The data come from the RNA Mapping Database (RMDB), library OK2TRN.
This 177-nucleotide RNA was probed chemically with 2A3 and DMS.
For 2A3, 2,170 sequencing reads were counted.
The RNA was probed in 150 mM KOAc, 10 mM MgCl2 and 150 mM bicine (pH 8.5) at 24 C.
2A3 adducts were read by reverse transcription with SuperScript II with manganese.
For DMS, 2,417 sequencing reads were counted.
RNA sequence: GGGAACGACUCGAGUAGAGUCGAAAAGCCUCCUCGGCAAAUGGCUCGCCUGGAACAGGUCUGAGAGCUCGGCGGCAGUGCUGGAGAUGAUGCAGCAGGCGCUGCAGAGGGUGAGCCAGAGCAGCUCGUUAAAGCUUUUGUUCGCAAAAGCUUUAACAAAAGAAACAACAACAACAAC
Reactivity to 2A3 in 0.01 (KOAc 150mM, MgCl2 10mM, bicine 150mM(pH8.5), 24C), signal-to-noise 2, nucleotides 027 to 126: g050c000c010u040c030c020u060c000g080g000c010a080a140a230u060g000g000c000u000c020g000c010c030u050g030g010a050a010c020a020g000g030u000c010u030g050a100g000a050g180c030u040c010g030g060c000g060g130c140a130g150u110g240c010u090g110g040a080g000a120u260g030a070u170g060c030a060g010c000a000g100g000c100g000c070u020g000c000a010g010a020g070g020g000u030g020a020g000c000c010a010g000a000g000c040a000g030c040u120c160
Reactivity to DMS in 0.01 (KOAc 150mM, MgCl2 10mM, bicine 150mM(pH8.5), 24C), signal-to-noise 2, nucleotides 027 to 126: g000c060c040u010c050c020u000c060g020g010c030a030a080a150u000g010g000c000u000c000g010c000c000u000g020g010a160a100c060a030g000g000u000c030u000g000a120g000a090g010c010u000c040g010g020c010g000g020c060a150g010u010g020c020u000g010g010a060g000a100u010g000a100u010g020c090a090g000c000a070g000g010c040g000c000u000g010c030a070g000a200g000g010g010u000g010a050g010c020c000a040g010a210g020c040a140g010c100u000c170